[RMDB]
RNA sequence: GGGAACGACUCGAGUAGAGUCGAAAAGUGCUUAUUCGUCACUGGCCAAGCUGCCCAUUGGCUACAUGGGUGCUUCAAAGAGCUGCCCUUCUCCAGGUCUGGCCAGCAGGUAUGUGUUACAGCAAAUGCCUGGGGCAGCGGCAGGGGCAUUGCUGCGCCGCAAGCAGUGAUUCGUCACUGCUUGCGGAAAAGAAACAACAACAACAAC
Reactivity to 2A3 in 0.01 (KOAc 150mM, MgCl2 10mM, bicine 150mM(pH8.5), 24C), signal-to-noise 1, nucleotides 027 to 156: g040u030g020c020u050u060a040u170u240c040g050u050c010a010c020u030g040g060c010c000a080a030g010c030u000g020c000c000c000a030u000u050g020g000c020u080a100c040a090u110g010g000g000u030g020c000u090u060c110a180a090a030g070a020g000c080u130g030c000c000c000u030u060c110u030c030c060a070g000g070u050c060u020g040g030c000c030a020g000c010a010g000g070u050a050u060g150u010g090u100u180a140c110a100g070c030a030a100a100u050g040c010c000u020g000g000g000g000c030a030g020c020g010g010c020a000g030g010g000g000c030a060u020u140g000c010u000g030c000g100